[RMDB]
RNA sequence: GGGAACGACUCGAGUAGAGUCGAAAAGCUUAAUAACCUGCGCUGAGCCCUUCUCCCCCAGCUUGCCUGUGUCCUAGGGAAUUGGAAGGUCAUCCUUCACGGGAUCGUGUGGAAGUCCUGCUCGGGGUCCAAACAUGGUAAUUCGUUACCAUGUUAAGAUGUGUUAUUAUUUCGAUAAUAACACAUCAAAAGAAACAACAACAACAAC
Reactivity to DMS in 0.01 (KOAc 150mM, MgCl2 10mM, bicine 150mM(pH8.5), 24C), signal-to-noise 4, nucleotides 027 to 156: g000c050u000u000a080a140u000a070a100c030c020u000g020c050g030c030u000g010a140g020c010c010c040u000u010c050u000c010c020c010c020c030a130g000c040u010u000g020c050c020u010g020u000g020u000c030c030u000a110g020g010g000a060a130u010u010g020g010a070a070g000g030u000c090a100u010c000c010u000u010c040a110c090g030g010g010a070u000c040g030u010g000u000g030g020a110a110g020u000c020c010u000g000c020u000c050g010g010g030g020u010c020c030a120a030a000c000a010u000g020g020u000a010a060u000u000c290g020u000u000a010c000c000a010u000g010u000u000a050a130
Reactivity to 2A3 in 0.01 (KOAc 150mM, MgCl2 10mM, bicine 150mM(pH8.5), 24C), signal-to-noise 3, nucleotides 027 to 156: g000c020u110u140a080a010u090a170a200c030c040u100g040c070g000c060u070g030a040g010c030c010c000u100u070c080u060c010c010c010c010c000a010g000c020u030u060g030c000c010u060g010u010g020u060c010c020u030a050g010g040g060a070a100u080u060g060g020a040a020g030g000u070c040a080u110c020c010u060u070c020a000c020g000g000g070a080u110c030g030u020g010u020g090g000a040a040g010u030c010c010u010g000c010u000c020g000g000g000g020u000c030c030a030a050a000c000a000u000g000g010u010a010a020u040u020c020g010u010u010a000c000c000a000u000g000u000u010a020a010